[RMDB]
RNA sequence: GGGAACGACUCGAGUAGAGUCGAAAAGUCGCCGCGUCAACAUCAACGCCCAGCGCGGGCGAGGGAGGCGUCCUACGGGGGUGACCCAUUCGCCGGCAUGGCAGAGGACGGCAAGAUUGCCGCGACGGCGUAUCCGUAGUUUCGACUACGGAUACGCAAAAGAAACAACAACAACAAC
Reactivity to DMS in 0.01 (KOAc 150mM, MgCl2 10mM, bicine 150mM(pH8.5), 24C), signal-to-noise 2, nucleotides 027 to 126: g040u000c020g040c010c040g010c030g010u000c010a010a020c070a190u000c030a140a060c090g000c000c010c000a150g000c150g000c150g000g000g020c020g000a050g010g000g020a160g010g020c000g000u020c000c020u000a120c140g010g010g010g010g030u000g000a210c000c000c010a190u000u000c130g000c000c010g000g040c150a090u000g010g020c040a140g000a080g000g000a050c010g000g000c070a070a080g020a190u000u010g020c060c060g000c030g000a030c070g000
Reactivity to 2A3 in 0.01 (KOAc 150mM, MgCl2 10mM, bicine 150mM(pH8.5), 24C), signal-to-noise 2, nucleotides 027 to 126: g000u030c020g020c020c020g000c000g000u000c030a090a080c000a160u060c010a030a070c060g030c030c000c000a070g090c260g030c070g150g000g050c010g000a040g070g070g020a160g060g020c010g020u000c020c000u040a210c120g090g000g000g000g000u170g060a160c000c020c010a090u080u100c020g000c000c000g070g140c090a090u180g000g000c000a000g010a010g040g010a010c020g010g030c020a000a010g080a170u130u230g020c020c000g000c000g000a020c010g020

Structure probing data (DMS and 2A3) for a 177-nucleotide construct.
The 2A3 profile rests on 1,977 reads.
The RNA was probed in 150 mM KOAc, 10 mM MgCl2 and 150 mM bicine (pH 8.5) at 24 C.